An RNA of 177 nucleotides, treated with DMS and 2A3 and read out base by base. It was measured as part of the RMDB library M2PK90. The reactions ran in a buffer of 150 mM KOAc, 10 mM MgCl2 and 150 mM bicine (pH 8.5), at 24 C. For 2A3, 2,712 sequencing reads were counted. Reactivities are given for positions 27 through 126.
[RMDB]
RNA sequence: GGGAACGACUCGAGUAGAGUCGAAAAAAAAAGAGAAAACUCACAUACAGUCAGUCGCGUGUAAGGAGUCGCGUACCUUACGACUGUUUGAAAUAAUGCGACAAAAGAUCGAAUGAUCAAAAAAAAAACAUUAUUCAUGAUUCGUCAUGAAUAAUGUAAAAGAAACAACAACAACAAC
Reactivity to DMS in 0.01 (KOAc 150mM, MgCl2 10mM, bicine 150mM(pH8.5), 24C), signal-to-noise 2, nucleotides 027 to 126: a050a040a030a090a100g020a090g010a120a090a070a070c100u000c040a140c090a100u000a030c000a010g000u000c010a140g000u000c010g020c000g040u000g000u010a020a000g020g000a060g000u000c140g000c120g000u000a050c000c000u000u000a000c020g000a010c010u010g000u000u000u000g000a100a040a060u000a030a030u000g030c000g010a010c010a140a080a080a060g000a010u000c010g010a070a080u000g010a030u010c010a000a010a000a000a000a110a100a120a040
Reactivity to 2A3 in 0.01 (KOAc 150mM, MgCl2 10mM, bicine 150mM(pH8.5), 24C), signal-to-noise 2, nucleotides 027 to 126: a000a000a010a030a010g170a030g030a030a080a030a020c050u070c030a060c010a040u180a010c000a010g020u030c010a000g010u040c020g000c000g010u040g020u010a010a000g010g010a000g010u050c010g040c010g080u050a040c000c000u000u000a000c010g000a010c000u010g020u050u050u060g030a010a010a000u130a030a010u030g000c010g000a010c020a010a100a010a030g010a000u000c000g130a220a250u300g000a030u000c000a030a010a000a120a000a000a060a000a000